Conditions: 150 mM KOAc, 10 mM MgCl2 and 150 mM bicine (pH 8.5), 24 C. Chemical mapping of a 177-nucleotide RNA with 2A3 and DMS. The 2A3 profile rests on 1,021 reads. DMS adducts were read by reverse transcription with MarathonRT.
[RMDB]
RNA sequence: GGGAACGACUCGAGUAGAGUCGAAAAAGGUCCGGGCCAAGUAUGGCUGGACUGAUGUGUCGCGCUUUGCCGCUUUGGGCAUACCGGCGGUCAAUUACGGCCCGGGUGAUCCCAACCUGGCGCACUGGAGUACUCAAAGCUUCGGCUUUGAGUACUCAAAAGAAACAACAACAACAAC
Reactivity to 2A3 in 0.01 (KOAc 150mM, MgCl2 10mM, bicine 150mM(pH8.5), 24C), signal-to-noise 1, nucleotides 027 to 126: a000g090g000u040c010c040g000g050g000c010c000a090a020g070u030a160u170g010g060c000u000g020g060a050c010u000g030a070u050g080u050g070u110c040g000c010g030c110u110u140u150g030c060c020g070c000u140u140u170g180g000g000c040a030u070a100c050c000g020g030c010g010g010u030c010a000a080u200u060a030c150g000g000c010c010c030g010g000g000u040g010a100u010c020c000c010a000a030c010c020u030g040g000c100g000c050a030c110u100g110
Reactivity to DMS in 0.01 (KOAc 150mM, MgCl2 10mM, bicine 150mM(pH8.5), 24C), signal-to-noise 1, nucleotides 027 to 126: a160g010g040u000c000c000g000g020g010c000c010a060a260g020u010a110u000g050g030c000u000g000g000a090c010u000g000a030u000g010u000g020u020c010g000c040g020c040u000u020u000g020c110c030g010c160u000u000u000g010g000g020c000a040u000a080c150c130g020g010c020g000g000u000c010a070a090u030u010a080c140g010g010c000c010c000g000g010g000u010g030a100u000c030c000c000a120a130c060c000u000g000g040c040g030c070a070c130u000g000